[RMDB]
RNA sequence: GGGAACGACUCGAGUAGAGUCGAAAACUGCUGCAGCGAGGACACGGCGGAGGCGAGCCGCGAGAGGGCCUGCGCGGGCGGCGCGGGCGCCAGCGCCUGCGCGUAGCGCUGCGGCGGCGGCUCGGCGGGUCAUAAUCCACUUCGGUGGAUUAUGACCAAAAGAAACAACAACAACAAC
Reactivity to 2A3 in 0.01 (KOAc 150mM, MgCl2 10mM, bicine 150mM(pH8.5), 24C), signal-to-noise 1, nucleotides 027 to 126: c000u040g010c030u010g000c000a040g000c000g060a040g100g070a040c020a030c200g090g000c030g030g090a040g000g040c020g020a050g020c000c030g020c020g010a070g020a030g100g230g010c000c000u030g020c010g000c040g060g140g030c100g100g040c000g000c030g000g020g030c060g010c060c040a030g050c000g000c000c000u020g030c000g020c030g030u040a010g090c040g000c030u050g010c010g020g020c020g030g000c010g000g000c000u010c020g050g020c010g020
Reactivity to DMS in 0.01 (KOAc 150mM, MgCl2 10mM, bicine 150mM(pH8.5), 24C), signal-to-noise 1, nucleotides 027 to 126: c040u000g000c010u010g000c040a030g020c000g010a120g000g020a130c120a070c110g000g040c030g000g000a100g000g020c020g000a070g030c040c030g030c040g010a120g000a110g000g000g000c000c020u000g010c040g010c040g010g000g010c120g000g000c000g000c000g000g000g000c010g030c080c090a090g010c050g000c010c010u000g010c030g020c020g020u010a100g030c020g020c010u000g010c020g010g020c050g010g000c020g010g010c020u000c010g000g010c100g000